[RMDB]
RNA sequence: GGGAACGACUCGAGUAGAGUCGAAAAUCAGCUCUGGAGUCCUCCGACCCGUGAGGUCGAGGAUCCCCGCGCAGGGAGGCAGCCACCAGGAGAAAGCGGAGAAGUCACCUCCAGAGAAACCCUCUCCAAACCUGCGCCUUCGGGCGCAGGAAAAGAAACAACAACAACAAC
Reactivity to DMS in 0.01 (KOAc 150mM, MgCl2 10mM, bicine 150mM(pH8.5), 24C), signal-to-noise 2, nucleotides 027 to 129: u010c090a170g000c000u010c040u080g020g040a030g110u010c030c000u000c040c030g130a000c000c000c030g000u040g000a220g000g000u040c000g030a070g000g000a070u070c000c050c040c000g040c190g150c150a110g070g000g000a170g000g000c170a090g010c040c000a080c060c000a150g000g030a090g080a000a180a100g020c090g000g050a090g000a170a010g080u010c090a120c260c000u000c020c000a090g010a050g050a160a140a060c080c020c000u010c020u070c010c070a130a200a150
Reactivity to 2A3 in 0.01 (KOAc 150mM, MgCl2 10mM, bicine 150mM(pH8.5), 24C), signal-to-noise 2, nucleotides 027 to 129: u120c020a020g040c000u000c010u050g000g000a000g010u060c020c000u030c060c050g000a000c020c000c040g220u130g160a270g020g000u000c010g000a000g000g000a040u010c000c000c030c030g040c000g030c060a090g030g000g000a020g020g050c020a000g040c070c000a070c010c020a020g010g000a020g000a000a140a000g030c040g000g050a050g010a050a010g100u050c030a050c070c020u000c020c010a010g000a000g000a080a020a000c040c020c000u010c000u040c000c010a030a010a010
Record summary
The record gives the reactivity of an RNA of 170 nucleotides to DMS and 2A3. High DMS reactivity at an A or C suggests that its Watson-Crick edge is free. It was measured as part of the RMDB library 15KLIB. The 2A3 profile rests on 2,798 reads. For 2A3 the reverse transcriptase was SuperScript II with manganese.